Background
An RNA of 177 nucleotides, treated with DMS and 2A3 and read out base by base.
RNA sequence: GGGAACGACUCGAGUAGAGUCGAAAAUAAGAUAUCAGAGGAGAUCAAGAAGUCCUACUGAUCAAACAUGCGCUUCCAAUAGUAGAAGGACGUUAAGCAUUUAUCAUUGAACUAUAAUUGUUCAUUGGAUGAUUACGCCAUUCGUGGCGUAAUCAUCAAAAGAAACAACAACAACAAC
Reactivity to DMS in 0.01 (KOAc 150mM, MgCl2 10mM, bicine 150mM(pH8.5), 24C), signal-to-noise 1, nucleotides 027 to 126: u020a190a120g040a160u010a000u000c050a010g020a170g020g010a050g020a260u020c210a170a120g000a140a100g000u000c000c000u030a160c010u000g000a010u000c280a060a110a070c150a000u000g000c050g000c130u000u060c000c000a140a190u020a140g000u010a030g070a000a070g000g000a000c050g000u090u080a110a110g020c080a050u000u030u040a020u050c130a100u000u000g010a040a060c040u000a110u010a080a250u020u000g000u000u000c090a120u000u000g050
Reactivity to 2A3 in 0.01 (KOAc 150mM, MgCl2 10mM, bicine 150mM(pH8.5), 24C), signal-to-noise 3, nucleotides 027 to 126: u110a000a020g050a070u150a020u080c020a000g000a000g020g030a030g020a070u180c130a150a060g130a150a010g190u000c000c020u050a250c030u000g000a000u030c030a040a050a010c040a090u070g000c010g010c000u030u000c010c000a070a230u090a090g120u010a020g030a050a050g010g000a000c030g000u100u110a090a010g040c010a040u120u100u140a120u140c050a010u000u090g000a020a010c010u040a020u120a300a150u120u110g010u010u000c020a020u010u030g060
DMS adducts were read by reverse transcription with MarathonRT.